[RMDB]
RNA sequence: GGGAACGACUCGAGUAGAGUCGAAAAGAUAUGGAGAUACCCAGGGAGCUCUUGUGGUCGGAAACGACCACGAGCGAGGAUCUGGGUGAUCUCCUAAGUCAAAACGGAAAUCCUUCGGGAUUUCCGACAUUCAAUAAGUGUUCGCACUUAUUGAAUGAAAAGAAACAACAACAACAAC
Reactivity to DMS in 0.01 (KOAc 150mM, MgCl2 10mM, bicine 150mM(pH8.5), 24C), signal-to-noise 6, nucleotides 027 to 126: g000a040u000a300u010g010g000a010g010a040u000a030c000c000c000a030g010g010g000a120g020c020u000c010u020u020g050u000g000g020u000c000g000g010a080a080a200c000g010a010c000c000a010c010g010a010g010c030g000a050g000g000a070u010c010u000g010g000g010u000g000a010u000c000u000c000c000u010a010a070g010u000c040a090a070a150a260c030g010g000a010a010a000u000c000c000u000u020c260g020g000g010a010u000u000u000c000c000g010a050
Reactivity to 2A3 in 0.01 (KOAc 150mM, MgCl2 10mM, bicine 150mM(pH8.5), 24C), signal-to-noise 3, nucleotides 027 to 126: g030a010u080a030u180g000g000a010g000a010u020a020c000c010c020a000g060g040g040a130g060c050u060c190u300u300g150u010g020g020u000c010g010g030a090a050a060c010g000a000c000c000a000c010g000a000g010c000g020a170g030g040a090u020c000u000g000g000g000u050g010a000u000c000u000c000c000u000a090a000g000u010c030a020a020a110a170c020g000g010a010a010a000u020c030c000u070u230c300g160g000g010a000u010u000u000c000c000g010a010